[RMDB]
RNA sequence: GGGAACGACUCGAGUAGAGUCGAAAAGUUAGCAAGUCCUACGCGCUGUCGCUUCGCUAUUUAUGCGAUGCCUUUGGGCAAGGCUAUAAUAAAUGUAUGGCAUUUUCGUGUAAGUAACAAUUGAGACGUAGCUUUUCAACUUCGGUUGAAAAGCUACAAAAGAAACAACAACAACAAC
Reactivity to DMS in 0.01 (KOAc 150mM, MgCl2 10mM, bicine 150mM(pH8.5), 24C), signal-to-noise 1, nucleotides 027 to 126: g000u000u000a100g010c090a110a090g010u000c090c020u010a080c160g010c040g010c130u000g040u000c080g020c040u000u010c060g020c030u000a050u020u020u020a000u000g040c020g020a060u000g000c000c020u000u030u030g020g020g020c020a160a100g030g030c020u000a010u010a030a110u000a080a110a140u010g010u020a040u000g010g040c010a060u000u000u000u000c050g030u000g000u000a060a070g030u030a010a090c030a060a160u000u000g000a120g030a100c110
Reactivity to 2A3 in 0.01 (KOAc 150mM, MgCl2 10mM, bicine 150mM(pH8.5), 24C), signal-to-noise 1, nucleotides 027 to 126: g140u100u140a030g020c000a020a060g060u030c010c030u010a050c050g000c010g000c070u050g060u120c010g030c010u150u070c010g000c020u020a040u080u090u000a040u070g000c000g010a020u010g000c000c000u040u100u200g080g070g000c040a010a020g060g000c010u000a010u020a120a070u170a050a170a010u140g070u120a100u030g060g000c030a080u210u000u000u000c020g000u010g000u020a000a080g030u030a020a050c020a090a130u050u090g080a040g030a050c050